The data come from the RNA Mapping Database (RMDB), library OK2TST. Structure probing data (DMS and 2A3) for a 177-nucleotide construct. 2A3 adducts were read by reverse transcription with SuperScript II with manganese.
[RMDB]
RNA sequence: GGGAACGACUCGAGUAGAGUCGAAAAGAUCGCAAGGCUCGCAGAACUCGGCGGCGCGGAAAUCAACGAAGCCAAGAAGAUACUGGCGACCGAAGUGACCGCCAUGCUGCAUGGGCGCGAUGCCGCAACUGAUGAUCGGAUUCGUCCGAUCAUCAGUAAAAGAAACAACAACAACAAC
Reactivity to DMS in 0.01 (KOAc 150mM, MgCl2 10mM, bicine 150mM(pH8.5), 24C), signal-to-noise 2, nucleotides 027 to 126: g000a060u000c040g000c030a250a140g040g010c010u000c060g010c040a050g000a080a230c110u000c130g020g040c050g000g040c010g000c040g000g010a110a170a020u020c110a030a300c150g030a040a300g000c010c000a060a070g000a060a080g000a260u000a050c130u000g000g010c060g000a120c060c040g000a120a090g000u000g000a190c010c000g010c000c200a080u010g010c000u010g010c010a030u000g010g000g000c060g010c010g010a010u000g030c020c000g000c130a080
Reactivity to 2A3 in 0.01 (KOAc 150mM, MgCl2 10mM, bicine 150mM(pH8.5), 24C), signal-to-noise 1, nucleotides 027 to 126: g030a000u040c040g010c080a090a100g150g000c010u010c000g020c040a010g000a120a090c070u060c100g000g000c000g000g010c030g000c010g060g020a070a170a030u080c020a020a110c060g070a110a020g000c040c000a040a050g100a050a030g060a110u190a180c040u050g010g010c030g000a020c040c040g060a000a010g030u040g070a180c000c000g000c000c030a020u090g020c000u040g000c000a160u200g000g000g030c020g000c000g010a010u040g040c030c020g020c040a040